RNA sequence: GGGAACGACUCGAGUAGAGUCGAAAAGGUGGCUGUUCGCAGCCACCAAAAAAACCUUUGUGUCAUACCAGCAUCGAUCGUAUAAACACCCAUUGGGUGUGUACGGGAGCUGUUCGUAUGACACUCUGGUAAAAAACAUGAUCUUCGGAUCAUGUAACUACAUACGUCGAUUCGUCGACGUAUGUAGAAAAGAAACAACAACAACAAC
Reactivity to DMS in 0.01 (KOAc 150mM, MgCl2 10mM, bicine 150mM(pH8.5), 24C), signal-to-noise 1, nucleotides 027 to 156: g000g030u010g000g040c000u000g010u010u000c300g060c000a000g010c000c030a000c010c000a000a000a010a080a040a040a010c000c000u000u000u000g030u010g020u000c020a000u000a010c000c010a080g030c030a060u010c040g010a300u000c010g040u010a010u000a030a080a210c000a010c020c010c020a300u010u000g030g040g040u020g010u000g000u010a000c000g000g020g000a300g140c090u000g000u000u000c130g010u010a000u000g000a050c020a010c010u000c010u010g000g000u000a030a030a050a070a040a030c000a020u010g000a030u000c010u000u000c300g010g000a000u000c010a010u000g010u000a040a140
Reactivity to 2A3 in 0.01 (KOAc 150mM, MgCl2 10mM, bicine 150mM(pH8.5), 24C), signal-to-noise 2, nucleotides 027 to 156: g010g010u000g000g000c000u020g080u140u210c300g020c140a020g000c010c010a010c020c010a010a000a000a000a000a000a010c000c000u010u010u000g010u010g010u000c010a000u000a010c030c010a000g010c000a040u080c040g040a030u000c000g010u000a020u050a100a240a010c010a010c000c060c050a300u220u300g030g000g000u010g020u000g000u000a000c000g000g010g020a020g000c020u000g000u010u020c030g010u010a000u000g000a000c000a000c000u000c000u010g020g000u070a180a060a010a000a000a000c000a010u010g010a010u000c010u080u090c300g100g000a000u000c000a000u000g000u000a030a030